[RMDB]
RNA sequence: GGGAACGACUCGAGUAGAGUCGAAAAAUUCGCGUCCGCCCUCAAGCCGCAAUCACACGGUUGAAAUGUGUAAUCGCCGUAAGAGGGACACAUUACUGGGUAGGAGGCUAGCGGGGUACCGAACAUACGUAGAUCGGUUAUUCGUAACCGAUCUACGAAAAGAAACAACAACAACAAC
Reactivity to 2A3 in 0.01 (KOAc 150mM, MgCl2 10mM, bicine 150mM(pH8.5), 24C), signal-to-noise 2, nucleotides 027 to 126: a000u090u020c030g000c030g130u020c040c060g060c000c020c000u040c030a060a000g040c010c020g060c080a020a060u040c010a040c010a010c070g040g050u050u130g120a090a060a000u030g030u000g010u020a090a170u120c130g050c200c000g050u030a050a000g090a110g040g020g030a010c010a000c000a010u040u130a050c040u040g040g030g030u080a160g070g040a010g080g000c040u070a000g020c020g000g000g000g020u060a040c020c020g000a050a060c050a080u250a060
Reactivity to DMS in 0.01 (KOAc 150mM, MgCl2 10mM, bicine 150mM(pH8.5), 24C), signal-to-noise 2, nucleotides 027 to 126: a170u000u000c040g040c090g130u000c100c090g000c040c020c000u000c040a100a170g050c010c030g040c050a090a090u000c170a070c100a060c010g000g000u010u000g010a050a060a000u020g010u000g010u000a080a040u140c100g010c020c110g000u000a140a230g000a160g000g000g000a030c040a000c050a040u000u000a040c060u000g020g010g000u000a030g020g000a100g000g000c010u010a080g000c120g020g010g000g070u000a050c050c000g010a040a080c170a040u000a100